[RMDB]
RNA sequence: GGGAACGACUCGAGUAGAGUCGAAAACGCCCACAAUGGGCCUCAACGGUUUCAACACGGAUGCGGUCUCGUGUGCCAAGUGUGAGCGGACGCGAAGCGCUGCGAGCCAGUCGGUCACGUACCGAAGGGUGGAAUUUCCCUUCGGGGAAAUUCCACCAAAAGAAACAACAACAACAAC
Reactivity to 2A3 in 0.01 (KOAc 150mM, MgCl2 10mM, bicine 150mM(pH8.5), 24C), signal-to-noise 1, nucleotides 027 to 126: c100g060c020c080c000a050c070a040a180u100g000g030g000c000c010u040c080a080a000c000g060g030u000u060u290c230a120a000c130a030c050g070g050a080u100g010c060g000g000u000c000u020c100g030u080g080u100g000c110c000a140a120g010u100g010u050g090a090g020c000g000g000a060c000g000c000g010a000a000g050c060g000c060u120g000c000g010a030g000c030c000a030g070u050c020g020g020u000c030a050c100g050u070a020c050c000g020a000a050g060